[RMDB]
Structure probing data (2A3 and DMS) for a 177-nucleotide construct.
RNA sequence: GGGAACGACUCGAGUAGAGUCGAAAAGAUAUGGAUCCCAAUGAUGACCAUGGAAAUACGUAUUCGGAAACGAAUACCACUCCAUGCAAGUGGGAUCCUAAGUCAAACCCUGUCUUCGGACAGGGAACAUCCGUGUCAGGUUCGCCUGACACGGAUGAAAAGAAACAACAACAACAAC
Reactivity to 2A3 in 0.01 (KOAc 150mM, MgCl2 10mM, bicine 150mM(pH8.5), 24C), signal-to-noise 2, nucleotides 027 to 126: g010a020u060a050u130g000g000a020u020c000c000c000a000a130u270g090a120u150g090a080c110c020a010u000g000g110a080a180a050u200a130c110g020u000a030u000u020c020g010g030a060a080a050c000g000a000a000u000a010c000c010a050c010u030c000c000a000u030g010c030a250a000g130u070g010g010g000a000u030c000c010u000a100a010g040u000c010a050a050a300c010c000c010u000g010u020c010u040u080c300g170g000a010c000a000g030g000g000a000a020
Reactivity to DMS in 0.01 (KOAc 150mM, MgCl2 10mM, bicine 150mM(pH8.5), 24C), signal-to-noise 2, nucleotides 027 to 126: g000a020u000a300u000g000g000a030u010c000c000c000a050a140u000g000a070u010g010a230c300c010a000u000g030g000a020a050a070u000a110c300g020u000a010u010u000c000g010g010a080a120a200c000g000a010a000u000a010c000c060a230c150u000c000c010a000u000g010c010a050a100g010u000g010g000g010a000u000c000c000u010a000a130g000u000c030a030a100a160c000c000c000u000g000u000c030u000u030c190g010g000a020c010a030g000g000g000a000a090
The RNA was probed in 150 mM KOAc, 10 mM MgCl2 and 150 mM bicine (pH 8.5) at 24 C.